[RMDB]
RNA sequence: GGGAACGACUCGAGUAGAGUCGAAAAGAUAUGGAGAAAGAGGUGGGAAUUCUUGGACCUCGGAAACGAGCUAGAAUACCACUACCCACCUUUCUCCUAAGUCAAAAGCGUAGCUUCGGCUACGCAACAAUCACGUGAAGUUCGCUUCACGUGAUUGAAAAGAAACAACAACAACAAC
Reactivity to 2A3 in 0.01 (KOAc 150mM, MgCl2 10mM, bicine 150mM(pH8.5), 24C), signal-to-noise 3, nucleotides 027 to 126: g010a000u030a020u060g000g000a000g020a010a020a010g110a060g180g170u010g000g010g050a190a180u020u000c000u030u090g140g140a300c040c010u000c010g000g010a010a020a010c010g000a000g020c000u000a000g020a020a030u060a110c060c150a130c200u080a070c020c020c010a020c000c040u000u000u000c010u000c000c000u000a020a010g000u000c020a010a000a150a100g000c010g000u000a000g000c000u070u030c300g070g000c000u010a000c000g000c000a010a000
Reactivity to DMS in 0.01 (KOAc 150mM, MgCl2 10mM, bicine 150mM(pH8.5), 24C), signal-to-noise 3, nucleotides 027 to 126: g000a030u000a180u010g000g000a010g000a000a010a030g020a130g030g010u000g000g000g000a120a080u000u000c000u010u000g120g010a110c300c020u000c010g000g000a040a040a080c000g000a000g010c010u000a010g000a040a020u000a070c100c090a110c280u010a120c010c020c020a300c030c000u000u000u000c010u000c010c000u000a030a080g000u000c030a050a090a090a060g020c010g020u040a010g000c000u010u010c150g020g010c000u000a010c000g000c000a020a050
Source: RMDB library TTRDEL, as collected in RNAgym. This 177-nucleotide RNA was probed chemically with 2A3 and DMS.